[RMDB]
RNA sequence: GGGAACGACUCGAGUAGAGUCGAAAACACUCACUUCAACAUUCCGAAUGGAAAGGGCCGCGUCUUGGUCGGCCUGGACAGCGGUGUGACCGAGUUCAACGCCAUCAACAAGUCGGGUGGUGCAACCUAGGUUCCUAUUGUUCGCAAUAGGAACCUAAAAAGAAACAACAACAACAAC
Reactivity to 2A3 in 0.01 (KOAc 150mM, MgCl2 10mM, bicine 150mM(pH8.5), 24C), signal-to-noise 2, nucleotides 027 to 126: c040a010c030u020c000a020c040u100u040c030a110a130c010a070u090u000c000c020g160a240a150u170g010g030a070a030a030g030g020g000c010c000g020c030g050u030c130u180u210g120g040u280c000g040g000c000c000u000g010g040a000c000a040g000c000g060g040u000g050u030g060a050c020c040g020a000g030u090u090c040a070a000c030g040c040c010a040u050c040a010a140c020a210a020g080u120c110g060g030g010u030g000g010u030g030c010a020a040c060c000
Reactivity to DMS in 0.01 (KOAc 150mM, MgCl2 10mM, bicine 150mM(pH8.5), 24C), signal-to-noise 3, nucleotides 027 to 126: c120a070c080u000c020a090c060u010u010c100a160a180c100a080u020u000c030c020g020a100a070u000g010g010a030a200a170g000g000g000c030c030g000c170g040u020c110u010u010g020g010u010c000g000g000c010c010u010g000g020a220c070a050g000c070g020g050u000g020u000g000a070c100c070g000a070g030u000u000c070a070a160c150g000c000c030a040u000c050a080a120c170a060a090g010u030c150g010g000g060u000g000g000u020g000c130a080a070c070c070